This 177-nucleotide RNA was probed chemically with 2A3 and DMS.

RNA sequence: GGGAACGACUCGAGUAGAGUCGAAAAGUCCUGGAGGGGGGCGUUGUGGCGGUCGGCCAACACGACCAAGGAGGCCAGGAAGGCGCGAUGCUCGAAUAUCGUGUUGAUCUGCUGCACGAAGGCCAGGGGACCUCAAUAACUUCGGUUAUUGAGGUCCAAAAGAAACAACAACAACAAC
Reactivity to 2A3 in 0.01 (KOAc 150mM, MgCl2 10mM, bicine 150mM(pH8.5), 24C), signal-to-noise 2, nucleotides 027 to 126: g050u080c000c000u000g000g030a080g060g050g010g000g020g040c000g040u060u100g060u010g040g040c000g010g090u080c060g010g050c000c000a010a040c080a010c050g020a000c000c000a010a020g040g040a070g010g000c000c000a010g120g040a100a020g070g000c030g000c020g030a060u140g000c000u020c090g110a190a010u110a000u110c020g000u000g060u000u030g050a100u080c130u190g050c050u020g000c030a060c090g050a030a050g080g000c000c000a020g050g000
Reactivity to DMS in 0.01 (KOAc 150mM, MgCl2 10mM, bicine 150mM(pH8.5), 24C), signal-to-noise 1, nucleotides 027 to 126: g010u020c020c030u000g000g000a020g000g000g000g000g000g000c040g070u010u020g000u000g010g000c010g000g060u030c140g080g020c110c000a020a090c000a120c010g000a040c190c070a090a280g030g000a270g000g020c060c030a070g040g020a110a100g010g000c010g000c070g040a090u010g000c060u030c110g000a210a130u020a040u000c050g030u030g010u000u000g000a150u020c010u000g010c020u000g000c000a070c040g000a190a040g010g000c000c020a080g000g000
DMS adducts were read by reverse transcription with MarathonRT.